About this RNA: The data come from the RNA Mapping Database (RMDB), library OK1LIB. An RNA of 177 nucleotides, treated with 2A3 and DMS and read out base by base. For DMS, 86,840 sequencing reads were counted. The RNA was probed in 150 mM KOAc, 10 mM MgCl2 and 150 mM bicine (pH 8.5) at 24 C.
RNA sequence: GGGAACGACUCGAGUAGAGUCGAAAAGAUGAGACUCUAGCUGUACACGAAUAGCUGCGUUAGUUGCAGUACUGACGCUUGUAUACGUGAAUACAAUGUGAAGUUCUGCAACUUCACAUGUCUCAGAGAUAGGUUACAAGUUCGCUUGUGAUCUAUCAAAAGAAACAACAACAACAAC
Reactivity to 2A3 in 0.01 (KOAc 150mM, MgCl2 10mM, bicine 150mM(pH8.5), 24C), signal-to-noise 9, nucleotides 027 to 126: g110a080u080g000a000g000a010c010u030c080u140a040g050c070u030g020u040a020c040a010c020g050a060a040u040a040g050c010u010g000c010g000u010u010a000g000u000u070g120c100a030g050u060a000c000u010g030a010c000g000c000u020u040g020u000a030u000a020c030g020u020g020a010a000u020a010c020a010a030u070g000u000g010a010a000g000u030u050c100u180g080c100a010a010c000u010u000c000a010c000a010u020g000u000c000u000c010a000g010a000
Reactivity to DMS in 0.01 (KOAc 150mM, MgCl2 10mM, bicine 150mM(pH8.5), 24C), signal-to-noise 9, nucleotides 027 to 126: g000a140u010g000a030g000a010c000u020c210u020a080g020c130u010g010u000a050c060a040c080g000a110a040u000a030g020c030u000g010c040g010u010u000a000g010u000u000g010c220a080g010u020a010c010u000g000a060c090g000c010u000u000g010u000a020u000a050c080g020u000g000a070a070u000a010c030a050a040u020g010u000g010a140a010g000u000u000c150u030g010c190a040a030c000u000u000c010a010c020a030u000g000u000c000u000c000a030g000a150